[RMDB]
RNA sequence: GGGAACGACUCGAGUAGAGUCGAAAAGCCAAUUAUCCAUACCCGCUCAUCGGAACUACUGCCGUUAAAAGUGUUACCCAAAAAAAGUUCCUGUGCGACAGGACCAUGUGGCGCAUACCGUUCUCCAGCAACUUCAUGUCCAUGGGAGCCCUUACGGCUCCCAUACAAUAUUCGUAUUGUAUGGGAGAAAAGAAACAACAACAACAAC
Reactivity to 2A3 in 0.01 (KOAc 150mM, MgCl2 10mM, bicine 150mM(pH8.5), 24C), signal-to-noise 5, nucleotides 027 to 156: g030c000c000a020a060u180u080a060u110c040c020a040u070a140c010c010c010g010c050u070c030a070u070c050g060g020a070a030c020u080a030c020u090g040c010c020g050u070u110a070a070a040a040g030u040g050u030u070a100c000c010c050a030a110a020a020a020a030a000g020u030u000c000c000u010g010u020g040c040g040a040c010a020g010g010a010c030c030a070u110g040u030g060g010c050g000c050a030u060a130c020c040g040u030u020c020u000c020c020a030g030c010a030a060c020u080u070c040a060u050g020u020c030c010a010u020g030g010g000a010g010c000c010c020u060u060a050c040g010g000
Reactivity to DMS in 0.01 (KOAc 150mM, MgCl2 10mM, bicine 150mM(pH8.5), 24C), signal-to-noise 3, nucleotides 027 to 156: g010c020c020a070a130u000u000a090u010c030c030a150u010a090c040c020c020g000c020u000c030a070u010c070g010g010a090a040c050u000a030c040u000g000c010c040g020u000u000a050a070a100a130g020u000g020u000u000a090c000c010c030a000a010a120a100a060a070a110g010u010u010c020c010u010g020u010g020c040g000a090c030a030g000g000a050c060c030a070u010g030u000g030g000c020g030c040a080u010a070c090c030g010u010u000c030u000c030c050a120g000c030a030a050c010u000u010c050a090u010g010u000c050c030a060u000g010g000g000a060g030c000c010c020u010u000a070c060g060g000

This 207-nucleotide RNA was probed chemically with 2A3 and DMS. Source: RMDB library OK3TST, as collected in RNAgym. DMS adducts were read by reverse transcription with MarathonRT. The reactions ran in a buffer of 150 mM KOAc, 10 mM MgCl2 and 150 mM bicine (pH 8.5), at 24 C.